[RMDB]
RNA sequence: GGGAACGACUCGAGUAGAGUCGAAAAGGGGUCGGUGAUGACCUACUGCAAGAAUGUUUUGCCGAGGAUCCUGAAGCCUCCACGGGGGAGGCGGACGGCCGGGGCAGUAGCAAGCCGACGGAGGCACCCAAAAUACUCGUCUUUCGAGACGAGUAAAUGUUGUGUACGAGUUCGCUCGUACACAACAAAAAGAAACAACAACAACAAC
Reactivity to 2A3 in 0.01 (KOAc 150mM, MgCl2 10mM, bicine 150mM(pH8.5), 24C), signal-to-noise 1, nucleotides 027 to 156: g050g000g000g000u010c020g030g020u070g090a300u100g000a030c010c000u000a030c000u000g000c040a050a010g030a210a100u120g140u230u240u260u150g040c000c020g030a120g140g110a250u190c030c010u020g010a020a000g000c010c010u010c100c010a120c210g110g000g010g000g000a000g000g030c000g000g000a000c000g010g000c010c010g010g000g020g000c000a000g000u000a010g000c040a100a130g000c000c000g020a020c060g090g050a020g060g070c030a070c000c000c000a030a220a000a000u010a020c000u000c000g000u040c000u050u130u140c300g130a020g000a040c000g010a000g000u010a000a000a000
The record gives the reactivity of an RNA of 207 nucleotides to 2A3. The RNA was probed in 150 mM KOAc, 10 mM MgCl2 and 150 mM bicine (pH 8.5) at 24 C. For 2A3, 660 sequencing reads were counted.